[RMDB]
RNA sequence: GGGAACGACUCGAGUAGAGUCGAAAACCGCUAUAGCAGGGUCGAAUUCCUAUAAUAGGCAUGCUUCUGUAAGGUCUGCCCUUUGCAAGUGGCGAUGAAAAUUGGGUCCUACGCAACGGAAGCCUAUGAACCCCGUCAGGUUCGGAAGAAAGCAGCGCGAUUACACUGAGUUCGCUCAGUGUAAUCGAAAAGAAACAACAACAACAAC
Reactivity to 2A3 in 0.01 (KOAc 150mM, MgCl2 10mM, bicine 150mM(pH8.5), 24C), signal-to-noise 4, nucleotides 027 to 156: c010c000g000c030u120a080u070a170g120c070a060g010g000g020u030c020g060a090a150u070u070c010c020u080a070u050a120a090u080a040g050g000c060a100u060g000c000u020u020c020u040g110u100a080a060g030g010u060c060u080g040c000c000c000u040u030u000g040c080a160a060g020u050g090g020c060g070a050u090g070a080a090a050a070u090u080g070g040g010u020c010c000u030a050c090g000c020a010a000c010g000g000a020a010g000c000c000u100a130u130g020a010a020c000c000c000c050g200u080c050a000g000g030u040u050c020g000g020a050a010g000a020a100a000g010c030a000g030c020g010
Reactivity to DMS in 0.01 (KOAc 150mM, MgCl2 10mM, bicine 150mM(pH8.5), 24C), signal-to-noise 2, nucleotides 027 to 156: c130c000g020c120u000a050u000a090g050c050a090g020g100g000u010c070g000a120a170u000u000c010c030u010a140u000a100a090u000a080g010g010c020a120u000g040c000u000u000c010u000g020u000a130a120g020g020u010c060u000g010c010c010c000u000u000u000g030c020a110a190g020u020g030g000c060g020a090u000g000a070a030a120a170u010u000g010g010g040u000c050c010u000a140c090g000c050a100a100c130g010g000a120a170g020c020c030u010a080u010g000a040a030c000c000c000c110g010u000c080a090g000g000u000u010c030g030g040a070a080g010a090a030a060g000c020a060g050c070g020